[RMDB]
RNA sequence: GGGAACGACUCGAGUAGAGUCGAAAAGUGAGGUGAGUGCGCACACCGCUCGGGGCAGUGAAUUUUUGCUAUGCAAAAAGAGGGGCUUAUUGGGCUAGAGCGGUCUCGGGCCGGGGCUUAAUAAGUAGUCAAAAUGACUAUUCGUAGUCAUUUUGACAAAAGAAACAACAACAACAAC
Reactivity to 2A3 in 0.01 (KOAc 150mM, MgCl2 10mM, bicine 150mM(pH8.5), 24C), signal-to-noise 1, nucleotides 027 to 126: g080u040g040a070g020g050u030g080a080g030u070g000c020g060c060a020c030a030c040c030g000c000u030c010g010g000g050g080c020a030g010u050g090a100a080u000u030u060u050u000g000c030u200a170u300g040c030a020a050a020a030a000g040a130g000g020g060g010c000u040u080a090u100u080g080g070g000c000u070a070g030a020g130c020g000g030u000c020u050c040g000g010g000c010c000g000g030g000g030c010u040u000a070a020u040a100a020g100u070a030
Reactivity to DMS in 0.01 (KOAc 150mM, MgCl2 10mM, bicine 150mM(pH8.5), 24C), signal-to-noise 2, nucleotides 027 to 126: g010u010g000a070g010g000u000g000a060g000u010g030c060g010c060a130c100a070c060c060g000c050u000c050g000g010g000g000c050a060g010u000g020a110a080u000u000u010u000u000g000c010u010a150u010g000c010a040a020a010a020a050g020a120g010g010g030g000c030u000u010a070u000u010g000g010g000c030u000a110g010a130g010c010g000g000u010c030u000c110g000g000g000c020c050g000g000g000g010c090u000u000a020a060u000a040a060g010u010a090
An RNA of 177 nucleotides, treated with 2A3 and DMS and read out base by base. For DMS, 2,540 sequencing reads were counted. For DMS the reverse transcriptase was MarathonRT.